[RMDB]
RNA sequence: GGGAACGACUCGAGUAGAGUCGAAAAGCUGUGCGGAUCUGGGUCGUCGCGCGCCGGAUCGGCGGUUCCGGUUCGUACACGAUCGACGCCGAAUGGUCGCAGGUCGCGGUGCGCUGCUACCCGGUGAGCUGACAUGCCGCGCGUAGUAGAUCCGCGGCGUCUCAAGGGUCUUCGGACCCUUGAGACGAAAAGAAACAACAACAACAAC
Reactivity to 2A3 in 0.01 (KOAc 150mM, MgCl2 10mM, bicine 150mM(pH8.5), 24C), signal-to-noise 1, nucleotides 027 to 156: g170c150u180g030u080g220c020g010g110a040u010c000u030g000g020g010u000c010g040u020c010g000c000g040c000g010c010c000g000g000a000u010c010g000g000c030g010g020u140u150c090c010g000g000u000u020c020g000u090a100c020a100c160g040a080u120c000g050a030c100g020c000c040g060a070a140u190g050g020u080c030g000c000a020g010g040u010c040g000c030g230g000u000g000c030g020c000u000g040c010u010a000c000c020c000g000g000u000g000a000g000c010u000g010a010c000a160u150g040c010c030g000c000g000c040g020u040a030g070u010a080g020a040u010c000c000g000c010g000g000
An RNA of 207 nucleotides, treated with 2A3 and read out base by base. For 2A3, 751 sequencing reads were counted.